[RMDB]
RNA sequence: GGGAACGACUCGAGUAGAGUCGAAAAGUGUGGUUUAUUAGUCCUUUUCCUGUGACCCUGAUGGUUUGGUUCACUCAUUUUUAUCUCCAUACUGGGAACAGGUUCAAGCCCCAGCAUUUGGUUGAUACAGUUACAAUUUAUUCGUAAAUUGUAACUGAAAAGAAACAACAACAACAAC
Reactivity to 2A3 in 0.01 (KOAc 150mM, MgCl2 10mM, bicine 150mM(pH8.5), 24C), signal-to-noise 9, nucleotides 027 to 126: g080u080g020u060g060g080u110u120u110a140u080u140a110g100u080c000c000u020u030u030u060c010c000u010g040u070g180a300c000c010c010u010g030a050u060g020g110u090u220u110g020g000u060u060c030a030c050u090c050a100u040u140u090u080u100a050u030c020u000c010c010a040u070a300c010u010g010g010g010a020a040c020a040g070g000u030u060c030a030a010g020c010c000c000c000a010g040c010a040u060u100u140g060g000u050u060g030a040u050a150
Reactivity to DMS in 0.01 (KOAc 150mM, MgCl2 10mM, bicine 150mM(pH8.5), 24C), signal-to-noise 9, nucleotides 027 to 126: g010u010g030u000g010g010u000u010u000a080u020u000a140g010u010c030c010u000u000u010u010c000c020u000g020u000g000a110c040c010c030u000g000a090u000g010g010u000u010u000g010g010u000u010c100a070c140u030c140a100u010u000u000u000u010a030u010c020u000c010c010a030u000a080c030u000g000g000g020a300a080c060a050g010g010u010u000c130a100a160g010c130c010c010c020a040g000c070a050u000u000u000g010g000u000u000g010a090u000a120
This 177-nucleotide RNA was probed chemically with 2A3 and DMS. DMS adducts were read by reverse transcription with MarathonRT. Conditions: 150 mM KOAc, 10 mM MgCl2 and 150 mM bicine (pH 8.5), 24 C. For 2A3, 16,667 sequencing reads were counted.